RNA sequence: GGGAACGACUCGAGUAGAGUCGAAAACAUCGUUGCAAGAGCGUGGGUGACCUGGCCGGCGUCGACGCCAACUGCCGAGAAAGACUGCUACGGCCUGCUGUACCAAUGUCCCGGCGCGACCGCGCUCGGGACCUCAUCGUUUCGACGAUGAGGUCCCAAAAGAAACAACAACAACAAC
Reactivity to DMS in 0.01 (KOAc 150mM, MgCl2 10mM, bicine 150mM(pH8.5), 24C), signal-to-noise 3, nucleotides 027 to 126: c050a110u010c100g000u020u000g030c110a120a150g020a080g000c030g040u010g000g000g030u000g010a110c070c040u010g030g030c040c070g010g000c160g000u000c070g020a100c170g000c120c060a010a150c060u020g010c030c000g000a070g030a100a180a110g000a100c110u010g020c070u000a060c010g000g000c020c040u000g020c100u020g000u030a110c090c090a100a150u010g010u030c010c010c020g000g000c070g010c080g000a070c160c060g020c030g050c000u010c110
Reactivity to 2A3 in 0.01 (KOAc 150mM, MgCl2 10mM, bicine 150mM(pH8.5), 24C), signal-to-noise 7, nucleotides 027 to 126: c030a080u190c090g070u080u110g050c070a130a050g010a010g030c020g030u060g040g040g030u100g050a110c030c080u080g080g010c020c000g030g010c060g020u060c030g040a040c060g020c020c010a020a030c030u050g010c010c020g010a020g080a070a120a000g090a060c090u160g020c030u170a070c050g040g000c000c030u040g020c040u070g030u100a100c040c000a070a070u110g050u060c010c010c000g000g010c070g000c010g020a040c040c030g010c000g000c000u020c010
Overview
Chemical mapping of a 177-nucleotide RNA with DMS and 2A3. Source: RMDB library OK1LIB, as collected in RNAgym. DMS adducts were read by reverse transcription with MarathonRT. The reactions ran in a buffer of 150 mM KOAc, 10 mM MgCl2 and 150 mM bicine (pH 8.5), at 24 C.